[RMDB]
RNA sequence: GGGAACGACUCGAGUAGAGUCGAAAAGAAAGAAAGAAGCUGCCGAAAGCAUCUAGCAAAAAUUAGAUGGAAUAUAGAUGAUAAAAAUAGUUGUAGCUUUACAAACGGCAGCACUGGUGAGAAAGAAACUAGCAUAAAUGUUCGCAUUUAUGCUAGUAAAAGAAACAACAACAACAAC
Reactivity to 2A3 in 0.01 (KOAc 150mM, MgCl2 10mM, bicine 150mM(pH8.5), 24C), signal-to-noise 3, nucleotides 027 to 126: g030a020a040a000g050a010a130a000g070a050a020g000c020u010g030c000c000g030a140a070a000g040c000a010u000c000u060a000g040c130a060a060a080a000a020u070u020a020g030a040u060g060g100a060a000u140a000u050a170g140a130u130g050a060u140a130a090a050a000a030u110a060g040u030u050g060u030a070g100c000u090u130u070a020c030a010a120a000c010g000g000c000a020g000c010a010c010u020g040g050u100g030a080g020a010a110a090g080a010a120
Reactivity to DMS in 0.01 (KOAc 150mM, MgCl2 10mM, bicine 150mM(pH8.5), 24C), signal-to-noise 4, nucleotides 027 to 126: g020a140a050a110g020a110a110a110g030a190a170g040c000u000g000c010c010g000a140a110a130g000c000a010u000c000u000a020g000c110a020a090a100a120a090u020u000a020g010a020u000g010g010a100a110u040a110u020a030g000a060u020g000a130u020a020a050a050a100a120u020a060g010u000u000g000u000a090g000c100u020u020u000a060c090a030a020a190c030g000g020c010a010g000c000a020c040u000g000g000u010g010a080g000a120a090a110g010a090a100
Description: The record gives the reactivity of an RNA of 177 nucleotides to 2A3 and DMS. The RNA was probed in 150 mM KOAc, 10 mM MgCl2 and 150 mM bicine (pH 8.5) at 24 C. For DMS, 5,923 sequencing reads were counted. The data come from the RNA Mapping Database (RMDB), library OK1LIB.